An RNA of 177 nucleotides, treated with DMS and read out base by base. High DMS reactivity at an A or C suggests that its Watson-Crick edge is free.

[RMDB]
RNA sequence: GGGAACGACUCGAGUAGAGUCGAAAAUGAUCGAGAGAUCUAACGAUGUACGCGAGUCAAUUGCACAGACUCGAGCGAAAGCUCGGUCGAAAGACCGCGUACAUCGGUCGGCAAGUGUCUAGUCAAACCGCCGUGAUAAUUUCGAUUAUCACGGCGGAAAAGAAACAACAACAACAAC
Reactivity to DMS in 0.01 (KOAc 150mM, MgCl2 10mM, bicine 150mM(pH8.5), 24C), signal-to-noise 2, nucleotides 027 to 126: u020g000a010u000c000g000a240g010a300g010a020u000c000u000a070a170c000g000a010u000g030u000a000c010g000c000g010a060g000u000c000a060a200u020u010g010c120a110c180a170g000a000c000u000c040g010a000g000c000g020a240a170a150g000c000u000c020g000g000u000c000g010a100a050a120g000a020c000c000g050c030g010u000a000c000a000u000c000g000g000u000c090g040g030c030a040a080g010u000g000u000c050u000a090g000u000c030a030a090a170